[RMDB]
RNA sequence: GGGAACGACUCGAGUAGAGUCGAAAAUUUCAAUAGUGGAGUCGAACUUUCGACCAUCAGGCAGAUAUCCAACAUAGUCCAGUGUCACGAUACUCCCCUGACGCGGUAUCGUUUUGCCAUCGCCCUCCUAUCACUGCGGUUUCGACCGCAGUGAUAGAAAAGAAACAACAACAACAAC
Reactivity to DMS in 0.01 (KOAc 150mM, MgCl2 10mM, bicine 150mM(pH8.5), 24C), signal-to-noise 2, nucleotides 027 to 126: u010u000u010c070a110a100u000a050g060u010g020g010a090g000u000c000g000a090a170c190u000u000u010c020g020a070c040c080a110u010c070a040g000g000c120a010g010a110u000a080u010c100c060a040a010c070a080u010a110g010u000c050c020a060g020u000g010u010c060a100c100g000a070u000a060c040u000c040c040c050c040u000g000a060c150g020c120g000g000u010a010u000c060g000u000u010u000u000g000c010c010a010u000c170g010c010c000c020u000c070
This 177-nucleotide RNA was probed chemically with DMS. The RNA was probed in 150 mM KOAc, 10 mM MgCl2 and 150 mM bicine (pH 8.5) at 24 C. Values cover nucleotides 27 to 126.